[RMDB]
Source: RMDB library M2RFPK, as collected in RNAgym. The record gives the reactivity of an RNA of 207 nucleotides to 2A3 and DMS. The 2A3 profile rests on 869 reads. The reactions ran in a buffer of 150 mM KOAc, 10 mM MgCl2 and 150 mM bicine (pH 8.5), at 24 C. For DMS the reverse transcriptase was MarathonRT. For 2A3 the reverse transcriptase was SuperScript II with manganese.
RNA sequence: GGGAACGACUCGAGUAGAGUCGAAAAAGUUUUGCCUGUUAGGUGAGGCUCCUAUGCAAACACAGGCCACUGCCCAAAAAUGUCCAAAGACGCCAAUGGGUAGAACAGGGACUGUCGGAUUAAGGCUAAAACAGCCCAUGCUUCGGCAUGGGCUGAACUAUAGAUCCAUCUUCGGAUGGAUCUAUAGAAAAGAAACAACAACAACAAC
Reactivity to 2A3 in 0.01 (KOAc 150mM, MgCl2 10mM, bicine 150mM(pH8.5), 24C), signal-to-noise 2, nucleotides 027 to 156: a000g050u070u030u060u050g030c020c000u090g110u190u250a130g000g030u010g080a050g020g030c030u070c000c000u130a130u150g000c040a070a070a040c040a020c000a040g000g000c000c000a050c020u000g000c000c000c000a010a000a000a000a000u000g000u000c010c020a180a080a120g000a000c000g000c000c000a000a030u000g000g000g000u000a000g020a050a030c060a080g010g000g120a120c010u010g060u080c070g070g000a030u170u090a150a050g060g000c020u010a010a010a020a040c010a000g020c000c000c000a000u000g000c000u010u120c190g070g040c030a000u080g120g020g000c000u000g000a000a000
Reactivity to DMS in 0.01 (KOAc 150mM, MgCl2 10mM, bicine 150mM(pH8.5), 24C), signal-to-noise 1, nucleotides 027 to 156: a050g010u000u010u000u010g020c000c010u000g040u020u000a070g030g070u010g020a000g010g030c010u040c020c040u010a090u010g020c050a110a110a120c080a080c030a110g000g000c040c000a200c000u000g020c000c010c010a020a040a160a140a140u000g000u010c040c010a120a150a170g000a130c050g020c010c060a060a300u000g020g030g040u000a020g010a030a170c030a120g000g030g010a030c130u000g000u010c040g020g050a180u000u010a050a090g010g000c030u000a060a030a060a130c010a020g010c050c010c000a000u020g030c030u000u000c300g060g000c000a000u010g010g000g020c000u000g000a000a030